RNA sequence: GGGAACGACUCGAGUAGAGUCGAAAAUUCCAUUGACCCACUGCUCGAGGACGUCCUCCCUGUCUCCUCGGUUCUUCUUCGAUCCGGACCGGCUCAUCUCGGCAAAAGGCGGCAGUCCUCAGUACUCGUAUGGAAAAUUGUUCGCAAUUUUCCAUACAAAAGAAACAACAACAACAAC
Reactivity to 2A3 in 0.01 (KOAc 150mM, MgCl2 10mM, bicine 150mM(pH8.5), 24C), signal-to-noise 2, nucleotides 027 to 126: u100u010c030c020a010u010u090g020a020c040c030c030a100c050u020g010c010u000c040g000a010g000g080a160c000g020u020c020c000u050c000c000c010u020g040u020c060u050c010c010u010c020g020g000u030u000c020u080u020c020u050u070c070g070a050u010c020c000g030g030a060c010c000g030g000c020u010c020a100u030c030u020c010g030g000c040a110a070a020a000g020g000c000g020g000c010a010g000u030c030c000u060c030a030g050u050a060c020u040c130
Reactivity to DMS in 0.01 (KOAc 150mM, MgCl2 10mM, bicine 150mM(pH8.5), 24C), signal-to-noise 2, nucleotides 027 to 126: u010u010c170c110a150u010u000g000a050c010c020c080a080c040u000g000c000u000c010g020a020g010g000a180c080g000u000c010c050u000c000c030c010u010g010u000c030u000c030c020u000c040g020g010u000u010c050u000u000c100u010u000c080g010a070u000c040c020g020g000a160c070c050g000g030c060u020c080a100u000c070u000c020g010g020c070a080a090a100a050g010g000c040g020g010c080a050g010u000c030c030u000c070a050g010u010a060c150u000c080